[RMDB]
RNA sequence: GGGAACGACUCGAGUAGAGUCGAAAAUCAUCUAUGUUCGCAUAGAUGAACACAGCCUUGUAGUUUUAGUGGACUUUACGCUAAAGAAUUUCACUAGAAAAAUAAUCGGGUGUUUCGACACCCGAAAGUGUAGAAAUCAAUUCGUUGAUUUCUACACAAAAGAAACAACAACAACAAC
Reactivity to DMS in 0.01 (KOAc 150mM, MgCl2 10mM, bicine 150mM(pH8.5), 24C), signal-to-noise 6, nucleotides 027 to 126: u000c000a000u000c000u000a000u000g010u000u010c210g040c010a010u000a000g010a010u000g000a020a050c160a090c200a210g010c010c010u000u010g030u000a100g010u000u000u000u000a010g020u000g000g010a040c040u000u000u010a070c160g020c150u000a030a050a110g000a080a090u010u000u010c020a020c060u000a050g000a000a050a070a120a100u010a060a080u000c000g000g000g010u000g010u000u000u010c160g000a040c000a010c000c000c000g010a000a010a030
Reactivity to 2A3 in 0.01 (KOAc 150mM, MgCl2 10mM, bicine 150mM(pH8.5), 24C), signal-to-noise 7, nucleotides 027 to 126: u020c000a000u010c000u000a000u010g020u020u060c160g000c120a010u000a000g010a010u010g000a040a010c110a010c000a020g090c010c010u150u200g200u190a270g100u060u010u020u020a010g010u000g020g010a010c010u050u040u100a090c160g050c160u180a080a080a080g030a070a100u020u080u060c010a010c030u030a020g080a040a100a030a030a050u210a050a080u040c000g010g000g000u010g020u010u090u060c110g040a010c000a000c000c000c000g000a010a010a000